About this RNA: Conditions: 150 mM KOAc, 10 mM MgCl2 and 150 mM bicine (pH 8.5), 24 C. Structure probing data (2A3 and DMS) for a 207-nucleotide construct. For DMS the reverse transcriptase was MarathonRT. For DMS, 7,642 sequencing reads were counted. The 2A3 profile rests on 7,291 reads. 2A3 is a SHAPE reagent: it acylates the 2'-hydroxyl of flexible nucleotides of all four kinds.
[RMDB]
RNA sequence: GGGAACGACUCGAGUAGAGUCGAAAAAAGCAGAAUCGCCAUGUCGUCAUCCUGUCUGUCGGAGGGCGGUGCGGUUAAAGCCAAAAGACAAACUACGCAUGUAGAUCCGGUGGUCUAGGUACUGCGGACGCGGGUUCAAUUCCCGCCGCCUCCACCACAUUAUCGUAAUCUUCGGAUUACGAUAAUGAAAAGAAACAACAACAACAAC
Reactivity to 2A3 in 0.01 (KOAc 150mM, MgCl2 10mM, bicine 150mM(pH8.5), 24C), signal-to-noise 6, nucleotides 027 to 156: a000a010g040c050a030g050a040a020u060c020g030c070c030a070u110g050u090c010g010u020c010a050u030c010c010u080g090u230c080u140g150u120c080g000g020a020g000g020g000c020g000g010u030g010c030g010g010u040u040a090a060a020g040c020c030a040a100a040a030g070a040c040a040a130a030c030u090a030c060g090c170a130u290g020u080a020g010a110u070c090c070g000g040u030g000g010u040c060u050a020g000g010u030a050c030u020g010c030g050g000a030c040g010c000g010g000g000u040u100c020a030a030u090u050c000c000c000g000c000c000g000c000c000u000c000c000a010c000c000a020
Reactivity to DMS in 0.01 (KOAc 150mM, MgCl2 10mM, bicine 150mM(pH8.5), 24C), signal-to-noise 3, nucleotides 027 to 156: a080a080g020c000a060g020a070a030u000c060g030c020c080a140u010g010u000c040g010u010c030a070u010c020c000u000g020u000c070u010g020u010c110g010g020a090g000g010g000c020g020g030u000g000c030g030g020u000u000a060a080a170g020c020c020a030a090a090a160g020a070c020a070a080a130c010u000a030c010g010c080a100u020g010u000a040g000a050u000c020c030g020g030u010g010g020u020c020u010a050g020g010u000a070c080u000g020c010g010g020a090c060g010c030g000g030g010u010u010c120a050a300u000u000c000c000c020g000c010c020g020c020c010u000c000c010a050c000c020a280